An RNA of 177 nucleotides, treated with 2A3 and DMS and read out base by base.
[RMDB]
RNA sequence: GGGAACGACUCGAGUAGAGUCGAAAAGAACCUUCAUAUGUGCAGUAUUUAUAUUGGAUCAUACUGGUGAUUAUAAAAGUUCCUAGGAGGCUAGAAGAGCCAACCAACAGAGAAGGGAAAGCAGUCUAGUUAAUGAAUGGUUCGCCAUUCAUUAACUAAAAGAAACAACAACAACAAC
Reactivity to 2A3 in 0.01 (KOAc 150mM, MgCl2 10mM, bicine 150mM(pH8.5), 24C), signal-to-noise 3, nucleotides 027 to 126: g020a020a030c000c000u020u030c020a040u040a020u190g050u040g060c010a000g020u060a060u020u200u050a190u050a060u100u140g060g010a050u130c010a010u020a040c040u030g030g030u040g070a040u080u160a050u040a160a170a020a020g010u020u000c000c000u010a080g000g030a030g060g000c020u040a040g090a230a030g050a250g020c000c000a020a080c020c010a030a050c030a020g070a010g010a040a050g030g000g000a000a060a000g020c020a000g040u000c020u060
Reactivity to DMS in 0.01 (KOAc 150mM, MgCl2 10mM, bicine 150mM(pH8.5), 24C), signal-to-noise 3, nucleotides 027 to 126: g020a230a090c000c010u000u000c080a170u000a030u010g010u000g000c020a010g010u000a020u000u000u000a050u000a050u020u010g000g020a060u010c050a020u000a060c080u000g000g010u000g000a130u000u010a090u000a050a110a130a110g000u000u000c000c000u010a130g010g000a300g020g010c010u010a090g020a120a100g020a070g020c020c020a060a090c040c030a020a120c130a090g000a060g010a070a050g000g000g010a050a050a050g010c110a070g030u000c080u010

The RNA was probed in 150 mM KOAc, 10 mM MgCl2 and 150 mM bicine (pH 8.5) at 24 C.
Reactivities are given for positions 27 through 126.
Values are in units of 0.01, from 0 to 300, in steps of 10.
The data come from the RNA Mapping Database (RMDB), library RFMREP.